[RMDB]
RNA sequence: GGGAACGACUCGAGUAGAGUCGAAAAUCAUGGUGGAAAAUGGCCGCUUUUCUGGAUUCAUCGACUGUGGCCGGCUGGGUGUGGCGGACCGCUAUCAGGACAUAGCGUUGGCUACCCGUGAUAUUGCUGAAGAGCUUGGCGGCGAAUGGGCUGACCGCUUCCUCGUGCUUUACGGUAUCGCCGCUCCCGAUUCGCAGCGCAUCGCCUUCUAUCGCCUUCUUGACGAGUUCUUCUGAGCGGGACUCUGGGGUUCGAAAUGACCGACCAAGCAACGGUUCGCCGUUGCUAAAAGAAACAACAACAACAAC
Reactivity to DMS in 0.01 (KOAc 150mM, MgCl2 10mM, bicine 150mM(pH8.5), 24C), signal-to-noise 5, nucleotides 027 to 266: u000c050a060u020g000g020u010g000g000a060a060a110a120u010g000g010c020c020g000c060u000u000u010u010c040u010g010g010a160u010u030c090a090u010c100g010a060c050u010g000u010g000g020c030c030g000g020c170u020g020g000g020u000g020u010g000g020c020g010g000a040c060c000g010c180u010a040u000c070a080g000g010a090c300a120u000a020g010c010g010u000u000g000g000c020u010a090c170c010c020g000u000g010a080u010a070u010u000g010c060u000g000a090a070g000a060g010c030u000u000g000g010c080g010g000c050g010a070a070u020g020g010g010c020u000g000a080c110c040g000c040u000u000c090c050u000c080g000u000g010c110u010u000u000a120c020g000g010u000a060u010c020g010c010c010g010c020u000c010c020c010g010a100u010u010c120g010c050a070g000c060g000c080a060u000c070g020c020c020u000u010c090u000a070u000c060g010c020c020u000u010c080u010u010g000a100c060g000a100g000u000u000c010u000u000c060u010g000a090g020c050g000g000g000a060c060u010c050u000g000g000g000g000u010u010c050g000a040a070a080u020g000a070c040c010g000a100c070c060a070
Reactivity to 2A3 in 0.01 (KOAc 150mM, MgCl2 10mM, bicine 150mM(pH8.5), 24C), signal-to-noise 2, nucleotides 027 to 266: u000c020a020u070g000g020u030g010g030a070a070a040a120u070g020g000c030c020g020c050u060u090u110u100c060u100g080g020a160u180u130c050a090u200c090g070a030c030u040g010u020g030g020c010c030g010g010c010u040g000g000g000u000g000u010g000g000c010g010g010a010c000c000g020c040u030a020u040c030a050g000g030a010c020a070u090a010g010c010g030u030u070g030g000c000u030a050c000c000c000g000u000g020a080u060a020u050u170g010c020u040g030a050a040g000a020g050c040u090u100g060g000c010g000g000c020g010a090a100u060g050g020g000c030u040g020a040c030c050g000c000u030u030c000c010u060c040g080u050g010c050u090u080u130a010c000g020g000u030a120u150c000g000c000c000g000c000u000c000c000c000g000a030u080u100c040g000c020a020g000c030g000c020a010u040c020g020c000c000u040u020c020u050a090u050c010g020c000c010u070u040c020u040u070g020a030c020g010a010g040u040u020c000u070u000c020u030g010a030g040c030g020g010g010a020c000u000c020u120g040g020g000g000u070u080c040g020a040a090a150u080g000a010c000c010g020a040c010c030a060

Chemical mapping of a 307-nucleotide RNA with DMS and 2A3. The data come from the RNA Mapping Database (RMDB), library POS240. Conditions: 150 mM KOAc, 10 mM MgCl2 and 150 mM bicine (pH 8.5), 24 C. High DMS reactivity at an A or C suggests that its Watson-Crick edge is free. For DMS, 13,918 sequencing reads were counted.